[RMDB]
RNA sequence: GGGAACGACUCGAGUAGAGUCGAAAAAAAAAAUGUUCAGUUAAUGGUGACUAAAUUCUGUUAUCUUGCAAAUGUUAAGUAGGCUACUUGACACGUGGCUGUUAAGUAAUGGAGCUGGGGUUCGGACCAGGUCUGUCCUCUUUCAGCUGCUCCAUGCUCUCUUAAGACCGUUCGCGGUCUUAAGAGAAAAAGAAACAACAACAACAAC
Reactivity to 2A3 in 0.01 (KOAc 150mM, MgCl2 10mM, bicine 150mM(pH8.5), 24C), signal-to-noise 1, nucleotides 027 to 156: a000a000a000a000a000a000u180g010u080u060c060a060g000u030u070a100a010u150g010g000u000g000a030c030u090a030a080a160u100u060c040u020g060u040u010a010u020c100u160u170g000c060a120a000a030u150g000u230u070a080a020g040u050a020g070g010c000u000a010c030u030u020g010a000c000a030c120g210u150g080g010c090u020g020u020u040a010a010g030u010a030a030u010g020g020a000g010c020u080g000g000g060g080u090u150c020g020g010a000c020c140a090g140g140u080c060u030g040u020c000c030u030c000u010u080u080c010a040g000c060u080g020c000u020c000c000a000u040g040c010
Background:
The data come from the RNA Mapping Database (RMDB), library OK3TST. The record gives the reactivity of an RNA of 207 nucleotides to 2A3. 2A3 is a SHAPE reagent: it acylates the 2'-hydroxyl of flexible nucleotides of all four kinds. Values cover nucleotides 27 to 156. For 2A3, 445 sequencing reads were counted.